Notes: Chemical mapping of a 177-nucleotide RNA with 2A3 and DMS. As a SHAPE reagent, 2A3 marks flexible, mostly unpaired nucleotides at the ribose 2'-OH. The data come from the RNA Mapping Database (RMDB), library OK1LIB. For 2A3 the reverse transcriptase was SuperScript II with manganese.
RNA sequence: GGGAACGACUCGAGUAGAGUCGAAAAGUGGACUGGGCAGGACAUAAAAUAGACGAGGGUAUUGAUGCUGUAAACAAAACUGCAGAAAAAGCUGUAGAUAGUGUUGGUAAUGCCAUUGGUGAUGCCAGCACUCUUCAUGGUUCGCCAUGAAGAGUGCAAAAGAAACAACAACAACAAC
Reactivity to 2A3 in 0.01 (KOAc 150mM, MgCl2 10mM, bicine 150mM(pH8.5), 24C), signal-to-noise 2, nucleotides 027 to 126: g140u070g000g000a140c050u050g000g050g020c040a000g020g040a000c000a030u280a020a150a100a030u260a090g040a030c110g040a020g000g000g000u030a050u130u060g080a120u040g010c050u010g040u080a070a000a070c030a020a000a000a160c000u010g000c010a000g110a110a150a020a000a040g120c000u000g010u000a000g030a040u120a040g140u100g040u030u090g060g000u010a170a000u040g000c000c040a020u020u060g080g000u060g000a030u120g000c030c000a000
Reactivity to DMS in 0.01 (KOAc 150mM, MgCl2 10mM, bicine 150mM(pH8.5), 24C), signal-to-noise 2, nucleotides 027 to 126: g000u030g010g000a060c000u010g010g000g010c090a010g010g010a080c170a100u000a010a080a000a160u030a050g000a080c140g010a090g000g000g030u010a070u010u000g020a030u020g010c030u010g010u010a050a050a070c150a100a060a070a100c060u030g010c010a000g000a130a080a060a050a120g030c010u000g010u030a030g000a030u050a080g000u000g070u020u000g000g010u020a070a050u050g000c010c020a070u100u040g020g040u000g000a050u000g000c000c000a020